Conditions: 150 mM KOAc, 10 mM MgCl2 and 150 mM bicine (pH 8.5), 24 C. An RNA of 207 nucleotides, treated with DMS and 2A3 and read out base by base. 2A3 adducts were read by reverse transcription with SuperScript II with manganese.
[RMDB]
RNA sequence: GGGAACGACUCGAGUAGAGUCGAAAACGAAUCGAGCAAGAUUAGACGCAAGACGUAGAGGGAGCGACAGCAUGGAAUCCGAUCGACGUUUGACAAAAUGUAGCACUUGAUUUUUGAAUAGCCAGCCUCGCAGCUCCUGGAAGGUGCUUUCUCGUUACCUACGUAGUAGUUUCGACUACUACGUAGGAAAAGAAACAACAACAACAAC
Reactivity to DMS in 0.01 (KOAc 150mM, MgCl2 10mM, bicine 150mM(pH8.5), 24C), signal-to-noise 4, nucleotides 027 to 156: c060g010a070a070u000c030g020a080g030c060a060a120g020a140u010u000a070g000a130c040g010c040a120a110g010a130c050g030u000a080g010a140g010g020g010a080g030c060g030a090c070a090g000c050a100u030g010g010a130a070u000c020c010g010a110u010c010g030a050c050g000u000u020u020g010a170c110a050a050a070a080u000g010u000a120g000c030a060c040u000u000g000a080u000u000u000u000u010g010a090a100u010a110g020c040c000a080g000c040c030u000c010g010c070a100g000c020u010c020c020u000g020g000a090a090g000g000u000g020c040u000u010u000c020u000c010g000u010u000a140
Reactivity to 2A3 in 0.01 (KOAc 150mM, MgCl2 10mM, bicine 150mM(pH8.5), 24C), signal-to-noise 6, nucleotides 027 to 156: c050g010a010a070u080c020g020a000g040c050a050a050g030a100u120u130a050g040a070c040g000c040a040a050g080a050c030g040u060a040g020a050g070g030g010a020g010c040g040a050c050a040g030c030a060u040g030g040a050a030u020c040c030g040a060u040c030g040a050c030g020u030u080u120g050a030c040a010a090a040a040u120g030u110a030g010c020a020c060u040u090g050a090u140u110u050u060u190g070a080a040u040a050g030c000c020a010g000c010c010u040c040g010c030a010g000c000u010c000c010u010g040g010a040a020g020g010u040g000c000u000u060u020c020u010c020g050u060u080a120
It was measured as part of the RMDB library OK3TST.